[RMDB]
RNA sequence: GGGAACGACUCGAGUAGAGUCGAAAAUUGCCGCUGACAGAGGACCGAAACUCGUAGUGGCAGCGACCGCGGACCUCGAGCUGGCGUACUGACGGAGGUCUCCACAAGUAUGCGCGCAGAUAUAGUGCAUUAAAUAGCGGUUCGCCGCUAUUUAAUGAAAAGAAACAACAACAACAAC
Reactivity to DMS in 0.01 (KOAc 150mM, MgCl2 10mM, bicine 150mM(pH8.5), 24C), signal-to-noise 9, nucleotides 027 to 126: u020u020g010c010c000g010c010u010g010a090c060a130g010a020g010g010a150c130c170g010a110a090a080c040u000c020g010u010a030g020u010g000g000c010a020g000c050g000a080c050c030g010c070g000g000a110c080c010u000c020g000a080g010c030u000g010g000c020g020u000a040c060u010g010a110c210g010g000a080g020g000u020c040u010c020c020a060c180a100a060g010u010a040u010g010c020g010c060g000c050a070g000a090u020a080u030a080g010u020g000
Reactivity to 2A3 in 0.01 (KOAc 150mM, MgCl2 10mM, bicine 150mM(pH8.5), 24C), signal-to-noise 9, nucleotides 027 to 126: u090u050g010c000c000g020c010u030g060a060c050a200g030a030g050g040a080c060c170g150a160a090a050c020u010c010g030u030a010g020u010g020g000c000a000g010c020g030a030c010c020g030c040g050g010a050c000c010u030c030g010a020g010c020u040g050g000c020g010u040a060c030u050g060a050c050g060g020a040g060g080u050c080u010c030c020a070c020a070a030g050u060a050u110g030c050g000c010g000c020a010g070a050u080a020u080a140g180u130g050
An RNA of 177 nucleotides, treated with DMS and 2A3 and read out base by base. Reactivities are given for positions 27 through 126. DMS adducts were read by reverse transcription with MarathonRT. The DMS profile rests on 39,501 reads. The 2A3 profile rests on 23,106 reads. The RNA was probed in 150 mM KOAc, 10 mM MgCl2 and 150 mM bicine (pH 8.5) at 24 C.